The record gives the reactivity of an RNA of 207 nucleotides to 2A3. Values cover nucleotides 27 to 156. Reactivities are rounded to 0.1 and cut off at 0 and 3.

RNA sequence: GGGAACGACUCGAGUAGAGUCGAAAAACGCGGAGUACGCUCCGCGACAACACUUCUUUCGACCCGCUAACCGAGACCUAUGGGUCGUUAAAUUACGUCUCUAUCUUACUCACAUAACAUCUCACAAAAAACGUGGUUCGGUUCGCCGAACCACGAACAUAUAUCGGGCCUUCGGGCCCGAUAUAUGAAAAGAAACAACAACAACAAC
Reactivity to 2A3 in 0.01 (KOAc 150mM, MgCl2 10mM, bicine 150mM(pH8.5), 24C), signal-to-noise 1, nucleotides 027 to 156: a000c040g000c020g000g010a000g000u020a000c170g000c030u000c000c000g000c000g000a000c000a120a020c080a060c030u060u110c100u080u300u250c010g000a020c010c010c020g020c260u220a000a030c040c040g090a020g000a030c000c000u030a110u200g000g000g000u010c000g050u010u010a000a050a030u090u120a000c010g040u000c020u030c010u020a140u130c020u120u160a120c090u110c100a090c020a190u140a140a030c020a120u100c030u120c100a060c130a030a100a010a100a130a030c040g000u000g000g010u020u010c020g030g020u020u070c100g040c100c010g000a000a000c000c000a000c000g000a000a000